[RMDB]
RNA sequence: GGGAACGACUCGAGUAGAGUCGAAAAAGCUCCAGCUUCUGCUGUUGCGUAUGAUGAUAAUCAAAACGCUUCUGUUGGUGUUAUGGAUUUGUCUGUGUUGCCAGCAGUUAAAGGGAGCGUAAAGCAGAAUGGGUUUACAUUUCGAUGUAAACCCAUUAAAAGAAACAACAACAACAAC
Reactivity to DMS in 0.01 (KOAc 150mM, MgCl2 10mM, bicine 150mM(pH8.5), 24C), signal-to-noise 5, nucleotides 027 to 126: a160g010c000u010c010c010a120g020c120u000u000c020u000g010c010u000g000u000u010g020c030g010u000a050u000g020a060u000g010a070u010a050a020u000c010a020a050a030a030c010g000c000u000u000c230u000g020u010u000g010g010u000g010u000u010a030u010g000g000a050u000u000u010g030u000c010u000g010u020g010u010u010g000c060c000a010g000c010a010g010u000u000a030a090a150g000g000g000a030g010c000g020u010a030a060a100g010c180a100g000
Reactivity to 2A3 in 0.01 (KOAc 150mM, MgCl2 10mM, bicine 150mM(pH8.5), 24C), signal-to-noise 1, nucleotides 027 to 126: a000g010c010u010c000c000a030g050c030u080u040c010u030g020c010u030g020u100u040g000c010g010u080a050u210g050a010u000g020a040u040a160a020u070c010a000a000a000a070c010g000c000u060u050c080u250g240u190u120g000g000u030g020u050u020a080u150g020g020a010u030u020u200g070u030c000u010g080u030g030u090u060g040c020c000a000g000c010a000g010u010u030a060a020a010g080g010g000a000g010c010g020u060a090a040a010g070c030a000g040